[RMDB]
RNA sequence: GGGAACGACUCGAGUAGAGUCGAAAAACAGGAUGAAUUCGAACUGGACGACUGUUUGCUGGAGAGCAACGACAUAGUCAUCACCCAGAACAAGGAUGGAUUCGUGUUGCACGUAAAGAAGCUGGGAAGUGCGGGGAGUAUUCGUACUCCCCGCACUAAAAGAAACAACAACAACAAC
Reactivity to DMS in 0.01 (KOAc 150mM, MgCl2 10mM, bicine 150mM(pH8.5), 24C), signal-to-noise 1, nucleotides 027 to 126: a080c030a060g020g010a130u000g020a210a040u000u000c060g020a160a160c010u000g020g000a020c300g000a060c010u020g050u000u000u010g020c000u000g010g030a170g000a040g010c010a000a000c030g010a000c300a170u020a040g030u000c020a120u000c140a170c010c000c010a010g010a120a030c260a070a090g000g000a000u000g000g000a070u010u000c010g020u000g010u000u000g070c040a000c040g020u000a030a040a060g000a120a110g010c030u000g000g000g020a110

The record gives the reactivity of an RNA of 177 nucleotides to DMS. It was measured as part of the RMDB library OK2TRN. Conditions: 150 mM KOAc, 10 mM MgCl2 and 150 mM bicine (pH 8.5), 24 C.